[RMDB]
RNA sequence: GGGAACGACUCGAGUAGAGUCGAAAAUGUGUUCCUAGGUCGGAAGCAUCAAUCCCAGGGGAAGCCAACUGCAGAACAUUUUAUGCAUCGCUCAUCCUGUUAUGAGCCUGGUGCUGUUCCAUCUCUCCUCGGUAGAAUUGUUCGCAAUUCUACCGAGAAAAGAAACAACAACAACAAC
Reactivity to DMS in 0.01 (KOAc 150mM, MgCl2 10mM, bicine 150mM(pH8.5), 24C), signal-to-noise 2, nucleotides 027 to 126: u010g010u000g000u000u000c010c010u000a160g000g030u000c110g000g020a070a100g030c070a050u010c090a140a140u000c030c020c030a110g010g000g000g000a080a080g010c050c060a050a090c090u000g000c150a100g000a050a060c050a070u000u000u000u000a050u020g010c010a010u000c040g000c040u000c010a010u010c040c210u010g000u010u000a000u000g000a010g010c030c050u000g000g000u010g000c010u000g000u010u000c030c040a090u000c060u000c040u010c090
Reactivity to 2A3 in 0.01 (KOAc 150mM, MgCl2 10mM, bicine 150mM(pH8.5), 24C), signal-to-noise 2, nucleotides 027 to 126: u040g020u000g070u020u040c020c010u040a080g030g190u130c100g010g000a020a000g030c000a030u020c030a020a140u020c030c010c000a000g020g010g010g010a080a010g040c000c030a030a040c060u050g000c040a040g020a070a010c020a040u050u060u150u160a110u160g000c000a000u010c020g000c010u010c010a030u020c000c080u090g060u210u110a080u030g010a000g000c000c090u070g000g010u010g000c030u020g000u020u020c020c010a150u050c030u010c000u010c020
About this RNA:
The data come from the RNA Mapping Database (RMDB), library RFMREP. Chemical mapping of a 177-nucleotide RNA with DMS and 2A3. For DMS the reverse transcriptase was MarathonRT. For DMS, 1,822 sequencing reads were counted. Reactivities are given for positions 27 through 126. Reactivities are rounded to 0.1 and cut off at 0 and 3. Conditions: 150 mM KOAc, 10 mM MgCl2 and 150 mM bicine (pH 8.5), 24 C.